[RMDB]
Background: Structure probing data (DMS and 2A3) for a 115-nucleotide construct. The 2A3 profile rests on 1,365 reads. The RNA was probed in 150 mM KOAc, 10 mM MgCl2 and 150 mM bicine (pH 8.5) at 24 C. High 2A3 reactivity points to a flexible backbone, as in loops and unpaired stretches. The data come from the RNA Mapping Database (RMDB), library P50LIB.
RNA sequence: GGGAACGACUCGAGUAGAGUCGAAAAGAUACGUAGUCGUUGGUCACAAAUUACGGACAAUGGCAUAAUUAAAAUACAAAGAAUUUCGAUUUUUUAAAAGAAACAACAACAACAAC
Reactivity to DMS in 0.01 (KOAc 150mM, MgCl2 10mM, bicine 150mM(pH8.5), 24C), signal-to-noise 5, nucleotides 027 to 095: g000a100u030a090c130g010u010a060g010u000c010g020u010u000g000g000u030c020a080c090a050a080a100u020u020a100c140g000g000a040c030a030a030u010g020g020c030a090u020a060a070u030u030a040a040a050a070u020a090c130a050a040a060g000a050a010u010u020u020c060g000a010u000u000u010u010u010u010a000
Reactivity to 2A3 in 0.01 (KOAc 150mM, MgCl2 10mM, bicine 150mM(pH8.5), 24C), signal-to-noise 1, nucleotides 027 to 095: g070a060u120a030c060g020u040a020g010u000c030g010u000u000g060g060u080c010a010c040a180a100a030u250u170a110c060g030g000a010c040a000a000u010g070g000c020a010u020a070a010u070u170a140a060a040a000u200a050c070a010a080a010g010a000a000u020u020u030c020g010a030u000u000u000u040u000u020a060